[RMDB]
RNA sequence: GGGAACGACUCGAGUAGAGUCGAAAAGAUCCAUCAGGCCACCAUGGCCGGGCAAAAUCGCAGACAUGUCUUUGAUCCCGAGCUCCCUCUUAAACUGGGAUUCGACAAGAUCGCCCAGUGUCGCGCAGCGAUAGUACUUAUUCGUAAGUACUAUCGCAAAAGAAACAACAACAACAAC
Reactivity to DMS in 0.01 (KOAc 150mM, MgCl2 10mM, bicine 150mM(pH8.5), 24C), signal-to-noise 9, nucleotides 027 to 126: g010a070u010c110c050a120u010c100a120g020g010c010c010a130c200c200a110u010g010g020c010c010g000g010g010c240a050a050a090a070u000c070g010c030a100g010a070c050a050u000g010u000c010u000u000u000g010a100u000c010c010c010g000a090g010c110u000c010c010c010u000c080u000u010a060a110a080c040u000g000g000g000a130u010u010c040g000a040c080a110a090g000a240u000c030g000c010c000c000a050g010u000g000u000c070g010c110g030c300a160
Reactivity to 2A3 in 0.01 (KOAc 150mM, MgCl2 10mM, bicine 150mM(pH8.5), 24C), signal-to-noise 9, nucleotides 027 to 126: g010a040u060c020c010a060u100c100a030g010g010c010c010a080c080c080a200u240g010g000c030c030g000g020g000c040a070a060a020a100u110c050g000c030a010g020a050c010a040u080g030u020c010u030u060u080g030a030u020c010c010c000g010a020g010c030u020c000c010c000u060c040u070u190a130a130a040c030u020g000g000g030a030u040u050c010g010a030c040a090a030g020a070u020c020g040c010c000c000a010g010u010g020u030c040g010c010g000c070a040
Description: The record gives the reactivity of an RNA of 177 nucleotides to DMS and 2A3. Source: RMDB library OK2TST, as collected in RNAgym. For 2A3, 47,775 sequencing reads were counted. The RNA was probed in 150 mM KOAc, 10 mM MgCl2 and 150 mM bicine (pH 8.5) at 24 C. For DMS, 67,827 sequencing reads were counted.